[RMDB]
RNA sequence: GGGAACGACUCGAGUAGAGUCGAAAAUAAACUAAAUUAAUCACUCAUCGGUGGAGAUAGGAUAAUGGCUAACCAGUUAGCGAAGGAUCUCGAAAUUGCUUUCGAGGAAUAUGUGGAGAGCUUCGAGGCGUCUUGCGUCGUGUCGAAGAACGCGGCGACUUAGCUCAACAUUCGUGUUGAGCUAAGUAAAAGAAACAACAACAACAAC
Reactivity to DMS in 0.01 (KOAc 150mM, MgCl2 10mM, bicine 150mM(pH8.5), 24C), signal-to-noise 2, nucleotides 027 to 156: u000a070a080a210c070u000a050a050a170u010u010a080a140u010c030a110c080u010c040a080u000c060g020g030u010g000g020a040g020a130u000a070g010g020a090u010a060a090u000g050g030c040u010a080a090c040c030a160g030u010u000a060g020c050g020a170a080g010g020a130u000c000u010c030g010a020a040a080u000u010g020c170u000u010u000c020g000a050g030g000a100a090u000a030u000g010u020g000g000a090g040a070g010c040u030u010c000g000a060g010g020c030g010u010c040u020u000g040c050g000u000c010g020u020g040u010c020g020a130a140g030a060a050c020g020c010g020g010c000g020
Reactivity to 2A3 in 0.01 (KOAc 150mM, MgCl2 10mM, bicine 150mM(pH8.5), 24C), signal-to-noise 3, nucleotides 027 to 156: u080a030a030a010c040u060a040a010a130u140u130a080a100u130c020a070c090u080c040a030u050c070g030g020u040g030g030a050g010a070u110a050g050g000a020u050a120a040u130g030g000c000u000a050a030c010c020a040g050u070u090a010g040c030g040a060a020g030g020a040u030c020u010c010g020a020a050a060u180u200g040c030u030u050u070c020g010a020g020g060a100a070u140a080u170g090u070g010g020a010g010a000g020c000u010u030c050g020a010g040g010c010g050u020c050u060u110g010c020g000u020c000g000u010g020u030c070g080a160a080g010a010a080c010g000c010g000g000c010g000